[RMDB]
RNA sequence: GGGAACGACUCGAGUAGAGUCGAAAAGAAAAGUCAGCUAUGACGAAAUAGCUAAAGAAAGCGGGUAACACGCGAAAGUUACCGAAAGAAAAGGCGAUCUGAGCCGAAACAGAUCAAAUAAAAGAAAGGGUAUGUAAAUCUUCGGAUUUACAUACCCAAAAGAAACAACAACAACAAC
Reactivity to 2A3 in 0.01 (KOAc 150mM, MgCl2 10mM, bicine 150mM(pH8.5), 24C), signal-to-noise 1, nucleotides 027 to 126: g050a010a100a000a000g010u010c010a010g000c000u020a000u040g050a000c190g010a050a050a050u000a020g000c110u150a050a050a050g090a130a220a000g290c200g000g000g100u090a000a000c050a000c170g100c150g050a070a060a000g000u040u000a000c040c040g070a030a100a000g020a000a090a000a000g040g000c120g000a000u000c000u000g000a020g100c140c220g060a080a000a000c000a000g030a000u000c050a000a030a080u300a080a010a080a010g190a020a000a100
Reactivity to DMS in 0.01 (KOAc 150mM, MgCl2 10mM, bicine 150mM(pH8.5), 24C), signal-to-noise 2, nucleotides 027 to 126: g000a200a130a140a150g000u010c060a050g020c000u010a020u000g000a060c060g010a020a020a040u020a000g010c000u080a030a140a070g010a030a260a090g010c040g010g010g010u000a010a000c000a100c190g020c200g000a010a060a080g010u000u000a020c000c010g040a140a070a110g000a040a010a060a060g000g000c200g000a050u000c000u000g000a060g010c160c020g000a060a120a050c010a020g010a000u000c100a090a120a090u030a100a100a130a000g000a080a060a170